[RMDB]
RNA sequence: GGGAACGACUCGAGUAGAGUCGAAAAGCUGGCUGUUUCACGAUAGCAAUUCUCUGGGUCUCUUUUCACAGAUACAAGUACAUCUAUGCCCAAUAAUUAUAUCUAUGGUAAUAAACUGAAAGAGCUAGUAUCUUUGAGGUUUCCACAUUGCCAACUAACUGAUACUGACGUUCGCGUCAGUAUCAGUAAAAGAAACAACAACAACAAC
Reactivity to 2A3 in 0.01 (KOAc 150mM, MgCl2 10mM, bicine 150mM(pH8.5), 24C), signal-to-noise 2, nucleotides 027 to 156: g050c050u050g030g010c040u030g090u050u040u070c030a040c090g090a060u130a040g080c030a040a130u130u000c080u040c040u090g000g010g020u060c030u000c000u070u150u170u150c050a020c000a040g020a040u080a070c020a020a130g040u020a070c010a070u010c050u110a040u090g020c000c000c000a000a120u120a070a050u130u140a220u070a060u170c050u060a080u120g000g000u010a030a190u080a210a160a030c030u020g090a100a090a000g020a010g000c020u040a030g020u110a040u060c000u000u020u070g080a010g020g010u010u030u090c020c020a090c020a100u010u080g020c020c000a040a060c040u100a060
The record gives the reactivity of an RNA of 207 nucleotides to 2A3. For 2A3, 654 sequencing reads were counted.